The data come from the RNA Mapping Database (RMDB), library M2PK90. Chemical mapping of a 177-nucleotide RNA with 2A3 and DMS. For 2A3 the reverse transcriptase was SuperScript II with manganese. For DMS, 1,030 sequencing reads were counted. Reactivities are given for positions 27 through 126. The RNA was probed in 150 mM KOAc, 10 mM MgCl2 and 150 mM bicine (pH 8.5) at 24 C.
RNA sequence: GGGAACGACUCGAGUAGAGUCGAAAAGCCGUGCUCGAGAGGGAGCAGAAAAUGCAGAGCUAUCCCGUCGUUUCGCUAAACAUAUGCGAAACGACAAAUUGCGUUACAUACGCAAUCCUCUAAUGAAUGCAUACUAGGGUUUCGACCCUAGUAUGCAAAAAGAAACAACAACAACAAC
Reactivity to 2A3 in 0.01 (KOAc 150mM, MgCl2 10mM, bicine 150mM(pH8.5), 24C), signal-to-noise 2, nucleotides 027 to 126: g020c000c020g130u050g000c000u010c020g100a030g020a030g030g020g020a000g000c010a000g080a010a160a000a020u130g000c050a010g030a000g050c000u030a060u080c000c040c000g010u010c000g010u000u000u020c020g010c000u080a150a160a060c050a100u160a020u150g010c000g000a000a000a000c000g020a000c000a000a040a000u010u000g000c000g000u030u050a110c060a080u250a070c030g000c010a000a010u000c010c020u000c020u030a040a060u150g100a070a050
Reactivity to DMS in 0.01 (KOAc 150mM, MgCl2 10mM, bicine 150mM(pH8.5), 24C), signal-to-noise 1, nucleotides 027 to 126: g010c020c010g000u000g000c000u010c030g020a040g010a020g010g000g000a030g000c030a090g020a040a100a100a140u000g070c160a080g020a090g000c050u000a100u000c000c010c030g000u000c000g000u000u000u000c000g000c000u010a070a140a110c300a130u010a140u010g000c010g020a000a000a010c020g000a010c010a050a020a020u000u040g000c000g000u000u000a100c130a030u000a030c000g020c000a010a020u000c010c020u000c010u000a070a070u000g000a100a060